[RMDB]
RNA sequence: GGGAACGACUCGAGUAGAGUCGAAAACCAAGGCGGUAAUGCUUCAUCCGGUGCGCUUGGCACAACUGGAGGAGCUACAGAUGCUGCGCAAGGUGGACCUCCAGGUUCCAUUGGCCUCACUGUAGAACGACUAUAAUCGUUUCGACGAUUAUAGUCGAAAAGAAACAACAACAACAAC
Reactivity to 2A3 in 0.01 (KOAc 150mM, MgCl2 10mM, bicine 150mM(pH8.5), 24C), signal-to-noise 4, nucleotides 027 to 126: c010c010a010a020g120g030c080g000g080u120a110a050u170g020c000u020u030c020a140u000c010c010g000g020u020g000c080g000c130u160u220g200g000c020a010c000a070a120c040u060g020g000a020g010g000a050g040c000u010a000c020a020g220a120u060g000c070u030g020c070g010c060a080a110g040g010u050g020g020a020c010c000u000c050c070a080g000g020u120u000c030c000a020u020u070g050g000c000c000u020c010a030c040u050g020u110a020g040a170a040
Reactivity to DMS in 0.01 (KOAc 150mM, MgCl2 10mM, bicine 150mM(pH8.5), 24C), signal-to-noise 5, nucleotides 027 to 126: c010c010a160a160g010g000c030g010g010u010a060a110u020g000c020u000u000c030a100u000c010c020g020g010u000g010c120g010c200u010u010g020g010c040a020c030a050a090c030u000g010g010a300g010g000a040g010c000u010a060c050a040g000a110u000g010c120u000g020c060g000c070a070a120g010g010u000g000g000a070c020c010u010c140c170a130g010g020u010u000c020c030a080u000u020g010g010c020c020u000c040a040c050u000g010u000a060g010a090a140